[RMDB]
Conditions: 150 mM KOAc, 10 mM MgCl2 and 150 mM bicine (pH 8.5), 24 C. Structure probing data (DMS and 2A3) for a 177-nucleotide construct. For 2A3, 2,504 sequencing reads were counted. Reactivities are given for positions 27 through 126.
RNA sequence: GGGAACGACUCGAGUAGAGUCGAAAAGAUAUGGAUCGUCCAAGGACGAGGAUCCGCAUAAGACCGUAACAUCCGUCGGAAACGACGGUGGGUCUUAUGCGGGGAGUCCGACGACGAUCCUAAGUCAGACAUCAUUCUUCUUCGGAAGAAUGAUGUCAAAAGAAACAACAACAACAAC
Reactivity to DMS in 0.01 (KOAc 150mM, MgCl2 10mM, bicine 150mM(pH8.5), 24C), signal-to-noise 1, nucleotides 027 to 126: g030a100u000a300u000g000g000a000u000c000g020u000c000c000a070a300g000g030a010c000g030a110g000g000a000u000c000c000g040c010a020u000a000a000g000a000c010c000g000u000a000a190c230a040u000c020c000g030u000c010g000g020a110a120a220c000g030a030c020g030g050u010g070g000g000u000c000u000u000a000u000g000c000g000g020g000g000a020g020u000c000c000g000a300c300g000a010c000g000a000u010c000c000u000a010a010g000u000c030a160
Reactivity to 2A3 in 0.01 (KOAc 150mM, MgCl2 10mM, bicine 150mM(pH8.5), 24C), signal-to-noise 1, nucleotides 027 to 126: g050a000u100a010u300g050g000a000u000c020g020u010c060c020a070a050g000g020a010c000g160a300g130g000a000u000c000c000g080c000a000u000a010a000g000a010c000c060g090u080a030a100c070a300u130c000c000g050u000c010g020g080a190a060a080c010g000a000c000g020g010u000g000g010g010u000c000u000u000a000u000g010c000g040g000g010g000a000g020u080c020c000g010a010c000g010a010c000g010a000u010c010c010u000a030a010g010u060c030a000